Structure probing data (2A3 and DMS) for a 170-nucleotide construct. The DMS profile rests on 6,993 reads. 2A3 adducts were read by reverse transcription with SuperScript II with manganese. The reactions ran in a buffer of 150 mM KOAc, 10 mM MgCl2 and 150 mM bicine (pH 8.5), at 24 C. For 2A3, 4,962 sequencing reads were counted. DMS adducts were read by reverse transcription with MarathonRT.
RNA sequence: GGGAACGACUCGAGUAGAGUCGAAAAGGAAAAAUCACCUCCAGAGGACCCCUUCAGCGAACGGAAGAGACUGGAAGCCCCAGAGGAAGACCAUAGCCAUGGGGAGAGAUGCUAGGAGUGGGGGGCGCAAGUCAGGACUUCGGUCCUGACAAAAGAAACAACAACAACAAC
Reactivity to 2A3 in 0.01 (KOAc 150mM, MgCl2 10mM, bicine 150mM(pH8.5), 24C), signal-to-noise 3, nucleotides 027 to 129: g060g010a040a030a000a020a060u070c040a030c050c000u030c020c010a040g030a050g030g000a050c020c000c000c030u030u060c060a060g010c030g030a020a020c030g020g040a070a000g030a020g020a060c060u050g010g050a060a000g060c000c000c000c000a000g090a060g040g000a020a030g020a050c020c010a060u100a040g020c000c020a060u050g000g000g100g000a020g010a000g000a000u080g050c060u070a020g030g020a050g000u060g000g020g000g020g000g000c020g000c000a060a010
Reactivity to DMS in 0.01 (KOAc 150mM, MgCl2 10mM, bicine 150mM(pH8.5), 24C), signal-to-noise 2, nucleotides 027 to 129: g020g020a010a020a070a070a090u050c100a090c050c010u040c040c040a100g030a150g040g000a090c140c010c000c060u000u030c120a100g000c050g000a050a060c040g000g050a000a000g030a110g000a000c080u000g010g000a000a000g060c040c070c040c060a050g000a000g040g010a050a010g000a080c080c080a060u030a120g000c040c030a110u040g020g110g020g020a010g040a080g030a080u070g040c070u000a110g000g030a040g010u010g030g020g020g060g050g010c140g040c050a000a000